[RMDB]
This 177-nucleotide RNA was probed chemically with DMS and 2A3.
RNA sequence: GGGAACGACUCGAGUAGAGUCGAAAAAAAAUAAACCUUACAAGCAUAUUUUUGGGGACUGUCCCUGACAAUGGUGAGCAAGCUCAGCUCGUACUGAGAAGCCUAAAGUUGUUAUCAUGGUUACCCAUCUAUGACAGGUGUUCGCACCUGUCAUAGAAAAAGAAACAACAACAACAAC
Reactivity to DMS in 0.01 (KOAc 150mM, MgCl2 10mM, bicine 150mM(pH8.5), 24C), signal-to-noise 1, nucleotides 027 to 126: a080a000a120a000u020a010a130a170c140c010u000u010a060c170a090a150g020c150a070u000a010u000u000u010u010u000g000g000g040g000a110c060u040g010u000c040c060c030u000g000a020c010a090a000u000g000g010u040g000a140g010c000a010a140g000c000u030c000a000g000c030u100c230g030u030a160c000u000g000a030g000a000a060g010c000c000u000a010a060a290g010u000u000g000u000u050a040u090c180a070u010g000g000u000u010a030c000c000c000a200
Reactivity to 2A3 in 0.01 (KOAc 150mM, MgCl2 10mM, bicine 150mM(pH8.5), 24C), signal-to-noise 2, nucleotides 027 to 126: a000a000a010a020u090a090a050a010c050c000u130u150a070c070a020a070g010c080a050u010a130u110u160u010u070u130g000g000g000g000a000c000u010g010u030c010c000c000u010g000a000c000a000a030u030g020g020u060g080a040g010c030a180a040g010c000u000c010a000g000c010u070c130g030u060a210c070u000g000a000g000a030a000g000c010c000u100a100a080a010g000u010u000g010u000u000a080u160c010a010u030g020g060u000u170a300c000c000c000a040
The reactions ran in a buffer of 150 mM KOAc, 10 mM MgCl2 and 150 mM bicine (pH 8.5), at 24 C. DMS (dimethyl sulfate) methylates the pairing face of unpaired adenines and cytosines. Source: RMDB library RFM100, as collected in RNAgym. For 2A3, 1,189 sequencing reads were counted.